[RMDB]
RNA sequence: GGGAACGACUCGAGUAGAGUCGAAAACCAAGGAUGGUAAUCCGGCGUCGAUUGUAAGGUCUAAACAAUUGACGCACCACUACUACAGUCCCAACGACUGAGGGACUCGUCGACUCGGUUAAGAUCGGAAACCGGGUCGAGGUAUAGUGAAUGAGUUGCAUAAUCUUCAGUUCGCUGAAGAUUAUGCAAAAGAAACAACAACAACAAC
Reactivity to 2A3 in 0.01 (KOAc 150mM, MgCl2 10mM, bicine 150mM(pH8.5), 24C), signal-to-noise 5, nucleotides 027 to 156: c020c000a030a030g030g000a040u090g040g140u180a200a040u010c040c010g030g000c000g000u010c000g010a000u000u010g040u080a100a110g200g120u140c200u220a150a180a010c000a000a000u000u000g000a000c000g000c000a010c000c020a010c020u070a020c020u040a010c020a010g010u000c000c020c000a090a030c110g220a070c090u130g040a140g020g000g020a000c010u000c010g140u000c000g000a000c000u000c000g000g030u020u130a130a070g090a230u190c090g080g010a080a020a010c000c000g000g010g000u000c000g000a000g000g000u040a040u020a060g050u020g050a060a150u110g030a080g140u060u020
An RNA of 207 nucleotides, treated with 2A3 and read out base by base. Source: RMDB library PDB130, as collected in RNAgym. For 2A3 the reverse transcriptase was SuperScript II with manganese.